[RMDB]
RNA sequence: GGGAACGACUCGAGUAGAGUCGAAAAGACCAUUUCGAUGGUCCCCACCUCCUAAGUCUUAGCGCGAAACUCCCAUUCAUUCGAAGAACUAUCGGAAACGAUAGGGAGAAUGGUGGGAGGAGCUAAGAUAUGGACCCCGUGGCAGUUCGCUGCCAAAGGCAUAUGUCGAUUUCGAUCGACAUAUGCCAAAAGAAACAACAACAACAAC
Reactivity to 2A3 in 0.01 (KOAc 150mM, MgCl2 10mM, bicine 150mM(pH8.5), 24C), signal-to-noise 3, nucleotides 027 to 156: g010a000c010c000a010u040u110u110c240g080a010u010g000g010u020c000c020c000c000a070c010c080u050c010c000u100a190a140g000u010c000u000u000a000g010c030g020c090g210a070a100a090c000u010c000c000c010a030u290u300c010a000u000u020c070g140a290a020g020a050a010c000u000a000u000c010g010g000a080a030a030c020g010a000u000a000g000g010g010a040g000a000a000u010g000g000u000g000g000g000a000g000g000a000g000c000u000a000a000g000a000u010a010u000g000g000a030c020c040c000c010g090u120g010g000c010a010g030u030u150c090g090c100u000g040c030c000a010a010a070